An RNA of 170 nucleotides, treated with 2A3 and DMS and read out base by base.
[RMDB]
RNA sequence: GGGAACGACUCGAGUAGAGUCGAAAAUAGCAGAGUCCGGGACCCCCUCCUAAAAGACCGAGGGGGGGUGCUUGGAGCACGGGGGUCCCAGUGGAUCCGUGGGAUGCUCCUCCCGAUUCCGAUAUCCAGGCCAUUACGUUCGCGUAAUGGAAAAGAAACAACAACAACAAC
Reactivity to 2A3 in 0.01 (KOAc 150mM, MgCl2 10mM, bicine 150mM(pH8.5), 24C), signal-to-noise 9, nucleotides 027 to 129: u170a010g050c080a020g010a010g070u050c100c060g000g010g010a020c000c000c010c000c000u030c010c000u110a140a140a060a040g120a090c100c120g040a090g000g000g000g010g010g000g010u030g050c040u090u220g040g030a030g000c010a010c020g080g000g010g010g000u010c010c010c010a030g030u140g060g020a040u020c050c080g180u080g010g050g010a050u070g070c010u010c000c000u020c000c000c000g000a010u040u000c010c010g020a020u030a040u120c030c010a020g060g050
Reactivity to DMS in 0.01 (KOAc 150mM, MgCl2 10mM, bicine 150mM(pH8.5), 24C), signal-to-noise 9, nucleotides 027 to 129: u020a000g040c070a060g020a060g020u010c060c040g030g010g000a090c020c010c000c000c000u030c010c030u040a060a090a090a090g040a120c190c190g000a040g040g020g000g000g000g030g020u000g030c110u020u060g000g000a000g030c000a030c010g020g000g000g000g000u000c010c010c150a110g030u040g000g040a030u030c020c030g040u050g000g020g030a080u010g010c020u020c030c000u000c000c010c030g000a060u020u010c030c040g030a090u030a060u010c040c010a160g000g000
DMS adducts were read by reverse transcription with MarathonRT.